[RMDB]
RNA sequence: GGGAACGACUCGAGUAGAGUCGAAAAAACCUCAGUAUGUGUUACUAGAGAACAUUGGCACUAGUCGAUUUAAUUUUCACCAAAUUGACUAUUUGGAUGAGAUCCUCAUUAUGCACAGUGCACAUCCGUGUUUCAGGGAAUUCGUUCCCUGAAACACAAAAGAAACAACAACAACAAC
Reactivity to DMS in 0.01 (KOAc 150mM, MgCl2 10mM, bicine 150mM(pH8.5), 24C), signal-to-noise 2, nucleotides 027 to 126: a090a050c050c010u000c130a070g040u010a060u000g000u010g010u000u000a020c030u010a100g000a050g000a080a050c090a100u020u010g020g000c030a110c190u020a020g000u000c010g020a020u000u010u000a050a060u040u000u010u000c150a090c130c080a010a000a010u000u000g010a060c100u010a150u010u000u000g010g000a070u000g000a060g020a210u000c080c020u000c030a140u010u000a080u010g000c160a050c080a030g010u000g000c020a050c090a020u000c070c170
Reactivity to 2A3 in 0.01 (KOAc 150mM, MgCl2 10mM, bicine 150mM(pH8.5), 24C), signal-to-noise 3, nucleotides 027 to 126: a000a040c050c010u080c030a040g030u090a020u050g080u020g050u080u150a050c040u050a050g000a020g020a190a010c020a060u050u090g060g000c050a030c110u050a030g020u010c010g020a010u030u010u090a090a090u110u060u150u150c070a080c040c000a010a010a020u020u040g020a030c030u040a070u070u050u100g070g030a100u020g030a030g000a110u020c010c000u010c030a100u080u150a030u160g070c030a050c020a050g010u020g020c010a000c000a060u000c050c050
The record gives the reactivity of an RNA of 177 nucleotides to DMS and 2A3. The DMS profile rests on 1,396 reads. As a SHAPE reagent, 2A3 marks flexible, mostly unpaired nucleotides at the ribose 2'-OH.